[RMDB]
RNA sequence: GGGAACGACUCGAGUAGAGUCGAAAAAUCGUUGCCCGAGGCCGUCGAGACCAUCGACCUGGGCGAGUACGCGAGCUGGCUGGACUCCGAACGGGUAGUGGUCAACGUCUACCAGCGUUACCGCGAACGGCAAGAUCUAGUUCGCUAGAUCUUGCCGAAAAGAAACAACAACAACAAC
Reactivity to 2A3 in 0.01 (KOAc 150mM, MgCl2 10mM, bicine 150mM(pH8.5), 24C), signal-to-noise 1, nucleotides 027 to 126: a000u090c040g020u020u120g100c020c000c050g010a060g000g090c030c060g000u030c000g070a020g070a250c000c040a130u070c010g070a080c000c030u000g020g010g020c040g000a010g030u040a070c050g000c030g030a030g050c040u040g130g000c070u070g020g050a040c000u000c020c030g070a120a020c030g000g000g070u030a000g040u060g050g000u080c070a010a020c000g050u000c000u050a040c000c000a000g000c010g020u010u070a050c020c020g040c040g040a080a020
Reactivity to DMS in 0.01 (KOAc 150mM, MgCl2 10mM, bicine 150mM(pH8.5), 24C), signal-to-noise 2, nucleotides 027 to 126: a060u000c090g030u000u010g020c000c020c020g000a090g000g010c070c030g030u000c070g000a140g020a130c010c070a080u000c000g000a050c010c000u000g020g000g010c030g020a050g000u000a040c060g000c020g010a100g000c120u000g010g000c040u010g030g020a090c020u000c060c120g000a080a170c030g020g000g020u010a080g040u000g020g010u000c110a050a050c090g000u010c010u000a070c100c060a130g020c000g000u000u000a060c080c020g000c050g010a040a150
An RNA of 177 nucleotides, treated with 2A3 and DMS and read out base by base.
The DMS profile rests on 1,332 reads.